[RMDB]
RNA sequence: GGGAACGACUCGAGUAGAGUCGAAAACUCUCCCGGUCGGUGAACCCUCUGGGCUUGGGUCUCCUCCCAGGUCCGGAAUCAGUCUCCAUGGCUUCCAUCCUGGGCCUCUUCUUCGGGGGCCCUCCCUAAGGGCUGGCGUUCGCGCCAGCCAAAAGAAACAACAACAACAAC
Reactivity to 2A3 in 0.01 (KOAc 150mM, MgCl2 10mM, bicine 150mM(pH8.5), 24C), signal-to-noise 2, nucleotides 027 to 129: c040u020c010u010c020c000c010g000g000u010c030g000g050u100g060a060a050c030c000c000u020c000u000g030g000g050c010u000u010g050g000g000u040c030u060c100c030u020c000c010c000a000g000g000u000c000c000g000g000a020a070u090c010a010g030u020c000u000c020c010a080u100g000g010c000u110u000c010c040a100u040c010c060u030g020g000g000c000c000u000c000u150u090c040u100u210c160g000g000g000g000g020c010c010c030u000c000c000c000u010a080a070g050
Description:
An RNA of 170 nucleotides, treated with 2A3 and read out base by base. The RNA was probed in 150 mM KOAc, 10 mM MgCl2 and 150 mM bicine (pH 8.5) at 24 C. For 2A3 the reverse transcriptase was SuperScript II with manganese. Source: RMDB library 15KLIB, as collected in RNAgym. Reactivities are rounded to 0.1 and cut off at 0 and 3.